RNA sequence: GGGAACGACUCGAGUAGAGUCGAAAACAACUUUUGCUUCUUUAUGGGCAUUGUUACUUACUUGGCCAUUUACUUCCAGGUCAUUUGGCAAGCUUCUCCAUGGAAGUCCGGUAUUGAUAUGCUCCCUUUCAUCAUCACCGUCUCUUUAGCCUCGGUAAAAUGGGUGCUAUUUCGAUAGCACCCAUUUAAAAGAAACAACAACAACAAC
Reactivity to DMS in 0.01 (KOAc 150mM, MgCl2 10mM, bicine 150mM(pH8.5), 24C), signal-to-noise 1, nucleotides 027 to 156: c130a070a100c120u000u030u000u020g010c020u000u000c020u030u000u000a100u010g000g050g030c040a060u010u030g020u000u010a070c080u000u000a050c040u010u000g050g000c080c050a080u000u000u000a050c070u020u050c090c110a120g020g030u010c040a140u000u010u000g010g040c050a090a090g000c000u000u000c000u000c020c030a090u000g010g000a030a070g070u010c050c010g000g050u000a050u010u000g010a090u000a110u010g000c040u000c040c050c000u000u020u010c020a100u000c040a070u000c080a090c060c030g000u000c040u030c050u010u010u000a100g020c050c010u000c040g030g010u000a030
Reactivity to 2A3 in 0.01 (KOAc 150mM, MgCl2 10mM, bicine 150mM(pH8.5), 24C), signal-to-noise 2, nucleotides 027 to 156: c030a000a020c020u000u040u130u120g000c010u120u130c040u070u290u130a100u210g010g000g000c020a070u000u080g030u040u040a090c020u040u020a020c010u040u050g050g020c000c000a090u040u060u050a050c050u100u070c040c030a030g000g000u020c030a050u080u050u050g040g030c040a030a020g070c010u060u040c030u000c030c040a070u080g000g020a040a040g010u000c030c020g010g010u060a070u040u100g070a060u030a020u160g070c020u060c020c000c000u030u080u070c030a080u000c020a020u030c010a010c020c010g080u020c010u000c000u110u090u070a030g030c000c040u070c040g010g010u200a010

The record gives the reactivity of an RNA of 207 nucleotides to DMS and 2A3. The RNA was probed in 150 mM KOAc, 10 mM MgCl2 and 150 mM bicine (pH 8.5) at 24 C.